[RMDB]
RNA sequence: GGGAACGACUCGAGUAGAGUCGAAAAGAUGCCUUCGGGCAUCAGAUUCCUAAGUCGAAUGGGCCAAGAGGUGCUCAGAGCGAAUCGGAAACGAUUCGCGACGAAGAGCACUACCCACCUUGGUAGUUCGAUAUGGACACUGUCGGUUUCGACCGACCACAGGACUUUGUUUCGACAAAGUCCUGUGAAAAGAAACAACAACAACAAC
Reactivity to 2A3 in 0.01 (KOAc 150mM, MgCl2 10mM, bicine 150mM(pH8.5), 24C), signal-to-noise 3, nucleotides 027 to 156: g010a000u000g000c000c000u040u080c230g140g000g010c000a000u000c000a000g040a070u100u010c020c000u020a170a030g040u000c000g000a000a010u080g010g300g010c000c000a000a000g020a020g040g000u010g010c010u010c010a000g000a000g010c020g000a000a000u000c000g010g060a060a070a070c000g010a010u000u000c000g000c010g010a040c000g020a050a030g000a000g000c000a010c010u020a000c040c040c010a080c030c000u000u030g000g010u030a030g010u010u000c000g000a000u050a070u110g100g010a070c060a030c300u100g010u010c010g010g050u010u140u200c280g130a050c010c000g000a000c000
Reactivity to DMS in 0.01 (KOAc 150mM, MgCl2 10mM, bicine 150mM(pH8.5), 24C), signal-to-noise 1, nucleotides 027 to 156: g030a010u000g000c000c010u030u010c300g000g070g040c020a040u000c000a020g040a260u000u000c060c000u000a070a250g000u010c000g010a050a050u000g000g030g000c050c040a030a060g000a030g060g010u000g130c000u000c040a070g010a300g000c000g060a010a010u000c060g000g000a240a220a180c010g000a010u000u000c000g010c020g010a050c160g000a090a120g010a070g000c000a000c000u000a010c000c000c110a300c200c010u030u000g030g040u000a300g020u000u000c000g030a040u000a170u000g000g030a130c160a110c030u000g010u000c000g020g000u000u000u010c120g030a040c000c010g040a160c020
The data come from the RNA Mapping Database (RMDB), library RNAMAK. An RNA of 207 nucleotides, treated with 2A3 and DMS and read out base by base. The 2A3 profile rests on 2,149 reads. Reactivities are given for positions 27 through 156. The RNA was probed in 150 mM KOAc, 10 mM MgCl2 and 150 mM bicine (pH 8.5) at 24 C.